Source: RMDB library OK2TRN, as collected in RNAgym.
Structure probing data (DMS and 2A3) for a 177-nucleotide construct.
For 2A3 the reverse transcriptase was SuperScript II with manganese.
Values cover nucleotides 27 to 126.
For DMS the reverse transcriptase was MarathonRT.
Conditions: 150 mM KOAc, 10 mM MgCl2 and 150 mM bicine (pH 8.5), 24 C.
For 2A3, 919 sequencing reads were counted.

[RMDB]
RNA sequence: GGGAACGACUCGAGUAGAGUCGAAAAUUGAAUGCUGUAGUUAUCUCAGAUAGCAGUCCAAAUGAACUUUCUGUCUUAGGAGGAUACAUAGGGUAUGCAUUUUUAGGGAGAGGAUCCUUUGAGAGAGCCAUGUAAUCCACUUCGGUGGAUUACAUGGAAAAGAAACAACAACAACAAC
Reactivity to DMS in 0.01 (KOAc 150mM, MgCl2 10mM, bicine 150mM(pH8.5), 24C), signal-to-noise 2, nucleotides 027 to 126: u010u020g020a090a030u000g000c030u010g020u000a090g010u000u010a050u000c010u000c060a110g020a060u000a080g000c300a050g000u000c020c040a000a100a070u000g000a140a070c050u000u010u000c030u010g020u010c140u010u000a070g010g010a050g010g020a050u000a040c040a050u000a130g000g000g020u000a050u010g000c040a050u000u000u000u010u000a100g010g010g000a060g010a150g010g010a090u000c020c020u000u000u000g010a080g000a110g000a120g040
Reactivity to 2A3 in 0.01 (KOAc 150mM, MgCl2 10mM, bicine 150mM(pH8.5), 24C), signal-to-noise 1, nucleotides 027 to 126: u110u090g060a070a030u090g010c000u040g020u130a030g050u090u080a070u130c030u010c060a020g020a060u070a060g020c020a000g040u010c050c000a020a130a140u090g030a030a050c010u030u130u020c020u060g300u010c040u100u150a050g020g050a000g010g000a030u050a110c030a060u080a010g030g030g020u080a050u110g030c000a040u000u040u040u110u200a060g000g020g000a030g010a030g070g050a050u050c020c000u010u060u110g060a000g000a020g020a010g000